[RMDB]
RNA sequence: GGGAACGACUCGAGUAGAGUCGAAAAGCUCGCCAGAGGUUCUGGGGUGGAACCCCUGACAGAGUAUGAGAUGUAUCUCCUAUGCAACAUUGGGACCGGAAUUGGGGGCAGUUCUGCCAACUCAUUGUCUAUUUCUAAGGUUCGCCUUAGAAAUAGAAAAAGAAACAACAACAACAAC
Reactivity to 2A3 in 0.01 (KOAc 150mM, MgCl2 10mM, bicine 150mM(pH8.5), 24C), signal-to-noise 5, nucleotides 027 to 126: g000c000u010c030g070c030c000a020g010a020g060g010u040u040c050u120g080g000g030g070u120g060g040a050a060c000c000c000c010u020g020a020c020a140g050a020g040u080a110u190g080a100g010a070u130g060u190a120u040c050u010c010c010u080a070u130g010c030a070a060c020a120u080u140g030g020g030a030c040c030g030g070a060a070u120u050g030g000g000g020g030c020a010g020u140u010c050u060g040c000c020a070a090c040u040c040a060u100u190g040
Reactivity to DMS in 0.01 (KOAc 150mM, MgCl2 10mM, bicine 150mM(pH8.5), 24C), signal-to-noise 6, nucleotides 027 to 126: g010c020u000c020g000c020c010a030g010a060g000g010u000u000c020u000g020g020g010g020u010g010g010a030a140c010c010c010c000u000g010a030c030a100g010a060g010u000a060u000g010a100g010a100u010g010u000a080u000c060u000c010c040u000a070u010g010c080a080a080c100a080u010u000g020g010g010a080c160c050g000g010a030a060u000u000g010g010g000g000g010c040a060g010u010u000c060u000g010c050c050a060a080c070u010c050a070u010u010g010